[RMDB]
RNA sequence: GGGAACGACUCGAGUAGAGUCGAAAACUUUGAACGUUCGCGUUCAAAGAAACCUCUAAGCAGAUUGGCGAGGACGACGCUGCGGAGCGCGAUUGCCAAUAAAAAGCGUAGGCUUCGGCCUACGCAACCAACAAGAGAUGUUCGCAUCUCUUGUUGGAAAAGAAACAACAACAACAAC
Reactivity to DMS in 0.01 (KOAc 150mM, MgCl2 10mM, bicine 150mM(pH8.5), 24C), signal-to-noise 5, nucleotides 027 to 126: c020u000u000u000g000a000a000c000g020u000u010c210g020c000g010u000u000c000a010a010a020g010a060a110a130c030c010u010c240u000a110a120g010c180a090g020a100u000u000g000g010c020g020a020g000g020a120c030g000a090c030g010c010u000g010c200g000g000a060g030c010g020c010g000a210u000u000g000c010c010a030a020u000a030a050a100a110a060g000c000g000u000a000g000g000c000u000u010c190g030g010c000c000u000a000c000g010c000a010a050
Reactivity to 2A3 in 0.01 (KOAc 150mM, MgCl2 10mM, bicine 150mM(pH8.5), 24C), signal-to-noise 5, nucleotides 027 to 126: c000u010u000u010g000a010a000c000g010u040u040c230g010c000g100u000u000c010a000a000a000g000a050a020a000c030c020u040c070u130a090a120g090c070a050g060a300u020u040g020g000c010g020a030g060g060a060c040g040a080c020g050c030u180g080c110g170g180a050g010c010g000c010g030a020u000u070g000c010c000a030a020u090a040a080a010a020a000g000c000g000u000a000g000g000c000u020u030c210g060g000c000c000u000a000c000g000c000a000a000

Conditions: 150 mM KOAc, 10 mM MgCl2 and 150 mM bicine (pH 8.5), 24 C.
This 177-nucleotide RNA was probed chemically with DMS and 2A3.
For DMS, 5,113 sequencing reads were counted.
High 2A3 reactivity points to a flexible backbone, as in loops and unpaired stretches.
DMS adducts were read by reverse transcription with MarathonRT.